An RNA of 177 nucleotides, treated with 2A3 and DMS and read out base by base. The 2A3 profile rests on 4,481 reads. DMS (dimethyl sulfate) methylates the pairing face of unpaired adenines and cytosines. The reactions ran in a buffer of 150 mM KOAc, 10 mM MgCl2 and 150 mM bicine (pH 8.5), at 24 C.
RNA sequence: GGGAACGACUCGAGUAGAGUCGAAAAGAACCCGCGUUCGCGCGGGUUCAAAGGUCUACCCGUCAGGGUUAAGGCCAUACGGACAGCCGGGUCCACUGCCGAAAACCAUUUUGUUCGCAAAAUGGAAUCAUGAAGAUAACUUCGGUUAUCUUCAUGAAAAAGAAACAACAACAACAAC
Reactivity to 2A3 in 0.01 (KOAc 150mM, MgCl2 10mM, bicine 150mM(pH8.5), 24C), signal-to-noise 2, nucleotides 027 to 126: g000a000a000c000c000c010g030c010g020u010u050c210g020c020g010c010g080g030g010u000u000c020a000a000a000g000g000u000c020u030a080c010c010c000g110u190c150a110g040g020g000u060u150a100a030g010g000c000c010a010u100a030c060g040g030a020c010a010g050c030c020g070g000g000u000c000c020a040c060u060g010c020c000g080a060a070a060a050c010c000a000u020u010u000u000g050u010u060c220g000c120a010a000a010a020u010g000g020a010a050
Reactivity to DMS in 0.01 (KOAc 150mM, MgCl2 10mM, bicine 150mM(pH8.5), 24C), signal-to-noise 4, nucleotides 027 to 126: g000a020a000c010c000c000g030c000g030u010u020c190g020c010g090c010g010g020g010u000u000c000a000a070a070g020g010u000c010u010a070c010c000c000g010u010c300a080g020g010g000u010u000a040a030g020g000c000c000a070u000a090c110g000g020a070c030a140g010c080c040g000g020g000u000c010c050a150c050u000g000c040c020g000a110a050a130a180c010c000a000u000u000u000u000g000u000u010c180g020c020a010a010a000a010u000g000g010a120a100